The record gives the reactivity of an RNA of 177 nucleotides to DMS and 2A3. For 2A3, 5,382 sequencing reads were counted. Conditions: 150 mM KOAc, 10 mM MgCl2 and 150 mM bicine (pH 8.5), 24 C. The DMS profile rests on 8,727 reads.
[RMDB]
RNA sequence: GGGAACGACUCGAGUAGAGUCGAAAAAUCCUGGCAUUCGUGCCAGGAUGUUUACCGAGAAAGUCCCUCGGUAUAAAAGGGCAACCCUUGGAAACAACGGAAUAAUCGCAGUGUUCGCACUGCGAAACAAAGCUAGUGUUUUCGAACACUAGCUUUGAAAAGAAACAACAACAACAAC
Reactivity to DMS in 0.01 (KOAc 150mM, MgCl2 10mM, bicine 150mM(pH8.5), 24C), signal-to-noise 6, nucleotides 027 to 126: a020u000c000c000u000g000g000c000a040u000u010c180g010u000g010c000c000a010g010g000a000u000g010u010u000u000a020c000c000g010a030g010a100a090a090g000u000c020c010c000u000c010g000g010u000a020u000a030a070a080a060g000g010g010c090a080a100c060c010c010u010u000g010g000a130a060a080c050a030a050c120g000g010a120a080u010a100a110u000c010g010c000a010g010u000g010u010u010c190g010c010a000c000u000g000c000g010a000a040a100
Reactivity to 2A3 in 0.01 (KOAc 150mM, MgCl2 10mM, bicine 150mM(pH8.5), 24C), signal-to-noise 3, nucleotides 027 to 126: a000u000c000c000u010g000g000c000a020u030u030c170g090u050g000c010c000a000g000g000a000u000g000u020u030u020a030c000c010g000a010g010a030a160a020g240u060c020c010c000u000c000g010g010u040a010u070a010a050a000a000g060g000g000c020a070a080c020c000c000u000u020g040g050a050a080a020c020a020a020c060g040g090a120a120u180a150a050u070c000g000c000a000g000u010g030u040u090c140g000c060a000c010u020g000c000g000a000a000a000